[RMDB]
The record gives the reactivity of an RNA of 177 nucleotides to DMS. Values cover nucleotides 27 to 126. Conditions: 150 mM KOAc, 10 mM MgCl2 and 150 mM bicine (pH 8.5), 24 C.

RNA sequence: GGGAACGACUCGAGUAGAGUCGAAAACGGUGUUAUCCGAAGUGGUGUUGGAGAGGACCGAAUUGGAGAUUUCGUAUGCCCCGCGCCUCGACCAGGAAAAAGAAGAACUACUACGCAAGAAAUUACAAUUGCCUCUAAGGUUCGCCUUAGAGGCAAUAAAAGAAACAACAACAACAAC
Reactivity to DMS in 0.01 (KOAc 150mM, MgCl2 10mM, bicine 150mM(pH8.5), 24C), signal-to-noise 1, nucleotides 027 to 126: c040g030g010u000g000u020u000a090u000c000c020g000a080a090g010u010g000g030u000g000u000u010g060g020a200g000a150g010g000a090c090c020g030a140a080u000u000g060g030a090g000a090u000u000u020c030g050u020a100u010g020c040c020c020c040g030c080g010c020c010u000c020g000a140c040c030a060g000g000a040a010a000a120a060g000a120a110g020a030a050c090u010a020c070u010a010c110g040c040a070a090g000a050a100a070u000u030a090c220a050